RNA sequence: GGGAACGACUCGAGUAGAGUCGAAAAGCGCGUAAAUAACAAAGGAUGGCGCCUUCGCAGACGCACAUCAACGUUCAAGUUUGCGAAGUGAAGUUGAACGUUUAUAAGAGCCGAUAAGGCGGAUAAAGGGAUUAUCUAUCUUCGGAUAGAUAAUCCCAAAAGAAACAACAACAACAAC
Reactivity to 2A3 in 0.01 (KOAc 150mM, MgCl2 10mM, bicine 150mM(pH8.5), 24C), signal-to-noise 3, nucleotides 027 to 126: g010c040g020c050g040u180a100a130a130u150a150a140c170a200a070a100g190g010a030u130g020g000c010g000c000c000u000u030c010g010c010a010g010a040c020g020c040a090c010a100u050c050a030a080c000g000u030u030c020a110a130g020u020u020u050g000c020g070a030a000g040u040g010a030a010g100u030u000g000a030a000c020g020u000u080u000a120u060a130a160g030a020g050c010c010g040a050u070a300a020g020g000c020g010g000a100u250a020a120a050
Reactivity to DMS in 0.01 (KOAc 150mM, MgCl2 10mM, bicine 150mM(pH8.5), 24C), signal-to-noise 2, nucleotides 027 to 126: g020c020g000c000g030u030a080a120a100u020a060a080c190a080a100a070g000g000a070u030g000g030c000g030c020c010u010u000c020g000c030a010g010a020c070g000c140a070c100a110u030c200a020a110c050g000u000u000c040a020a050g000u000u010u000g000c030g000a070a080g000u010g020a000a060g000u010u040g030a040a060c060g020u000u000u000a010u030a020a200g000a080g020c020c000g010a080u060a100a140g010g000c000g000g000a070u010a070a060a100
Annotation
This 177-nucleotide RNA was probed chemically with 2A3 and DMS. The 2A3 profile rests on 1,997 reads. The reactions ran in a buffer of 150 mM KOAc, 10 mM MgCl2 and 150 mM bicine (pH 8.5), at 24 C. The data come from the RNA Mapping Database (RMDB), library OK1LIB.